[RMDB]
RNA sequence: GGGAACGACUCGAGUAGAGUCGAAAAUUAAGGCACAUAAUUGUGCUUUGAGCUUUGAUUAGAUGUAAUCAAAUACAAUGACAAGAACACUGCACUUUCUUGUUGGACAUCGCUUACAGUGGACCCACAGUACACGGUGGCUAGAAACUGUGCUAUCUCCGCGUAUUAGGUUCGCCUAAUACGCGGAAAAAGAAACAACAACAACAAC
Reactivity to 2A3 in 0.01 (KOAc 150mM, MgCl2 10mM, bicine 150mM(pH8.5), 24C), signal-to-noise 1, nucleotides 027 to 156: u130u050a030a010g010g000c010a000c020a050u150a140a070u250u040g010u000g000c070u000u000u020g000a000g050c070u080u020u020g000a070u000u080a160g210a300u190g180u150a030a000u050c090a000a000a080u200a100c030a000a120u080g050a000c000a000a050g000a090a020c070a000c160u120g030c000a000c020u040u000u000c000u000u000g040u030u050g010g000a000c000a100u010c060g000c140u000u100a010c000a020g000u010g020g130a080c000c090c000a030c010a040g090u060a000c030a000c160g070g000u000g030g010c000u020a020g120a000a020a000c060u060g010u010g020c010u050a100u150c000